An RNA of 207 nucleotides, treated with 2A3 and DMS and read out base by base. Conditions: 150 mM KOAc, 10 mM MgCl2 and 150 mM bicine (pH 8.5), 24 C. The data come from the RNA Mapping Database (RMDB), library OK3TST. For 2A3 the reverse transcriptase was SuperScript II with manganese.

[RMDB]
RNA sequence: GGGAACGACUCGAGUAGAGUCGAAAACUAUGGCAAUGGUGACUGCAUCUCUGGGACCUGCCACUGCUUCCUGGGUUUCCUGGGCCCCGACUGUGGCAGAGGUGAGAACUCUGCAUUGGAGCUCUGGAUUUCUGCUUCCCAGACCCCUCAGGCAGCAAUUAAAUGGCAGUUUCGACUGCCAUUUAAUAAAAGAAACAACAACAACAAC
Reactivity to 2A3 in 0.01 (KOAc 150mM, MgCl2 10mM, bicine 150mM(pH8.5), 24C), signal-to-noise 3, nucleotides 027 to 156: c060u080a120u140g030g010c010a060a140u100g020g030u060g070a110c040u050g040c040a160u050c070u030c090u170g020g020g070a060c000c000u030g040c010c010a050c050u010g010c020u030u010c010c010u000g010g000g020u030u030u050c010c020u040g010g000g000c000c020c000c010g080a100c070u190g050u140g210g000c000a020g000a010g020g010u060g040a150g040a080a080c000u000c010u010g030c000a090u030u100g020g020a010g000c010u000c030u050g010g000a000u030u050u030c030u050g020c010u070u030c010c000c020a040g010a110c080c060c000c000u020c000a000g020g010c010a000g000c000a040
Reactivity to DMS in 0.01 (KOAc 150mM, MgCl2 10mM, bicine 150mM(pH8.5), 24C), signal-to-noise 1, nucleotides 027 to 156: c050u000a050u000g010g030c060a050a060u000g010g020u000g010a150c060u000g020c040a210u000c070u020c090u030g010g040g020a080c070c000u000g000c020c000a070c050u010g030c030u000u000c050c070u000g010g020g000u000u000u000c040c010u000g000g070g010c100c030c010c020g020a120c110u000g030u000g020g040c040a040g010a000g000g000u010g030a180g030a060a100c000u010c020u000g040c080a300u010u000g010g010a010g020c060u000c010u000g020g000a080u000u000u000c020u000g020c070u010u000c020c020c010a040g000a150c150c020c000c040u000c050a120g020g020c040a040g030c040a120